[RMDB]
RNA sequence: GGGAACGACUCGAGUAGAGUCGAAAAGAUAUGGACGCCAUCCAUAAGACAGCCACCCUCAACUAACCGAUCGGAAACGAUCGGUUAGUUGAGGGAAUGGCAAUGACGUGGUUGGCGUCCUAAGUCAUCUCAUGUCUUGGUUCGCCAAGACAUGAGAAAAAGAAACAACAACAACAAC
Reactivity to DMS in 0.01 (KOAc 150mM, MgCl2 10mM, bicine 150mM(pH8.5), 24C), signal-to-noise 1, nucleotides 027 to 126: g000a050u000a300u020g010g000a010c020g000c000c040a040u000c000c000a000u000a240a200g030a190c240a130g000c010c010a060c000c000c020u000c010a000a030c000u020a020a040c000c000g020a000u020c010g070g000a130a120a120c000g000a000u000c020g000g030u020u000a000g020u000u000g000a020g000g000g000a000a000u000g020g020c000a120a070u000g020a120c300g030u000g020g000u000u000g000g000c050g000u000c000c000u000a030a020g000u000c030a150
Source: RMDB library TTRINS, as collected in RNAgym. An RNA of 177 nucleotides, treated with DMS and read out base by base. The DMS profile rests on 793 reads. The RNA was probed in 150 mM KOAc, 10 mM MgCl2 and 150 mM bicine (pH 8.5) at 24 C.